Source: RMDB library OK1LIB, as collected in RNAgym.
The record gives the reactivity of an RNA of 177 nucleotides to 2A3 and DMS.
The reactions ran in a buffer of 150 mM KOAc, 10 mM MgCl2 and 150 mM bicine (pH 8.5), at 24 C.
The DMS profile rests on 9,492 reads.
The 2A3 profile rests on 13,455 reads.

RNA sequence: GGGAACGACUCGAGUAGAGUCGAAAAUUCAUGGAGACCCAUCCCACACUGGAUGCCUUACACUGUGACAUCGGCAAUGCCACUGAGUUUGACAAAAUAUUCCAAGAUGAGAUUGGGGAGGUGUCCCGGCUGCUAUAAUAUUCGUAUUAUAGCAGCCAAAAGAAACAACAACAACAAC
Reactivity to 2A3 in 0.01 (KOAc 150mM, MgCl2 10mM, bicine 150mM(pH8.5), 24C), signal-to-noise 9, nucleotides 027 to 126: u080u070c040a060u110g070g020a090g010a050c010c010c010a060u040c010c010c000a040c020a020c030u050g030g020a020u050g030c000c010u030u040a040c080a020c050u040g020u040g060a010c000a040u040c040g100g020c080a050a070u070g010c010c000a040c040u050g010a010g060u030u060u070g060a040c080a010a140a050a060u180a110u120u030c010c010a050a040g100a170u120g040a030g050a170u070u140g010g000g020g010a020g020g020u060g050u030c010c010c000
Reactivity to DMS in 0.01 (KOAc 150mM, MgCl2 10mM, bicine 150mM(pH8.5), 24C), signal-to-noise 5, nucleotides 027 to 126: u030u050c080a090u040g000g010a140g000a100c010c010c020a080u000c020c020c000a080c180a100c100u010g000g000a040u020g000c070c010u010u010a060c050a060c060u000g010u010g010a080c040a030u000c070g040g020c180a100a090u020g010c010c020a040c060u010g000a060g030u000u010u010g000a080c190a060a070a070a080u050a090u000u000c010c010a040a060g000a120u020g000a060g000a080u040u010g020g000g000g020a040g000g000u030g010u000c050c000c080